[RMDB]
RNA sequence: GGGAACGACUCGAGUAGAGUCGAAAAGCUCAGUGACAAUGUGGCCACCGCUUGCGGGCAAUCAAAUGUGGUACUGACGCGUUAUCAGCGCCCGAGUGAAAUUGAAGCUAUUCAUCAUCAUCCGCAGCAACCGAUUAGUAUUCGUACUAAUCGGUUGAAAAGAAACAACAACAACAAC
Reactivity to DMS in 0.01 (KOAc 150mM, MgCl2 10mM, bicine 150mM(pH8.5), 24C), signal-to-noise 7, nucleotides 027 to 126: g000c030u010c030a080g020u000g000a080c090a070a090u000g020u010g000g020c010c030a090c040c110g010c060u000u000g010c060g010g000g000c100a080a100u010c100a060a070a080u000g020u000g020g010u000a060c030u000g000a050c090g010c110g000u000u000a100u010c050a050g030c070g000c020c020c010g000a090g010u000g000a040a080a100u010u000g000a070a090g010c090u010a090u000u000c050a040u000c050a050u000c070a070u010c030c020g020c090a090g000
Reactivity to 2A3 in 0.01 (KOAc 150mM, MgCl2 10mM, bicine 150mM(pH8.5), 24C), signal-to-noise 5, nucleotides 027 to 126: g020c010u020c060a040g020u040g070a030c050a080a140u130g030u070g110g000c020c000a050c020c010g030c040u010u060g020c050g040g000g000c020a030a070u090c050a030a100a110u200g030u080g080g000u040a050c030u040g040a030c040g020c010g100u090u080a110u140c020a010g020c010g000c030c020c000g030a050g000u070g040a090a110a110u110u060g030a040a000g020c030u070a100u090u070c020a030u020c000a010u020c000a010u030c030c020g020c030a030g020